[RMDB]
Structure probing data (2A3 and DMS) for a 177-nucleotide construct. The DMS profile rests on 1,028 reads. For 2A3, 1,269 sequencing reads were counted. Conditions: 150 mM KOAc, 10 mM MgCl2 and 150 mM bicine (pH 8.5), 24 C. For DMS the reverse transcriptase was MarathonRT. Values cover nucleotides 27 to 126. 2A3 adducts were read by reverse transcription with SuperScript II with manganese.

RNA sequence: GGGAACGACUCGAGUAGAGUCGAAAAGAUGAUUAGUUCGCUAAUCAUCAAAGAACGCUGCAACGCGCAGAGAGCGCGCGAGACCGAGAAUGCGCGAAGAAAAAAGUUACGGGUUCGCCCGUAACAACAACCGUCAAAAGUUCGCUUUUGACGGUUGAAAAGAAACAACAACAACAAC
Reactivity to 2A3 in 0.01 (KOAc 150mM, MgCl2 10mM, bicine 150mM(pH8.5), 24C), signal-to-noise 1, nucleotides 027 to 126: g000a000u000g010a020u000u000a000g020u040u050c200g010c090u000a000a000u010c010a000u010c010a020a000a000g020a070a020c040g000c070u100g000c060a130a070c050g040c000g030c100a010g080a000g000a030g180c000g020c000g000c030g020a010g020a040c000c080g030a050g060a120a050u050g020c000g000c020g020a060a070g020a090a140a010a020a010a020g000u000u000a000c000g040g020g000u020u010c100g040c010c000c040g020u020a000a000c000a000a000
Reactivity to DMS in 0.01 (KOAc 150mM, MgCl2 10mM, bicine 150mM(pH8.5), 24C), signal-to-noise 2, nucleotides 027 to 126: g010a030u000g010a000u000u000a010g000u000u020c270g040c020u000a000a000u010c010a010u000c000a070a130a100g020a070a110c060g030c050u000g030c090a100a100c030g000c020g000c020a090g010a210g000a140g000c020g000c000g030c110g010a090g020a240c000c030g010a100g020a050a070u000g010c010g000c000g000a090a110g030a020a080a040a060a130a150g000u000u000a010c010g010g000g020u000u010c240g010c010c000c010g010u000a000a000c010a060a090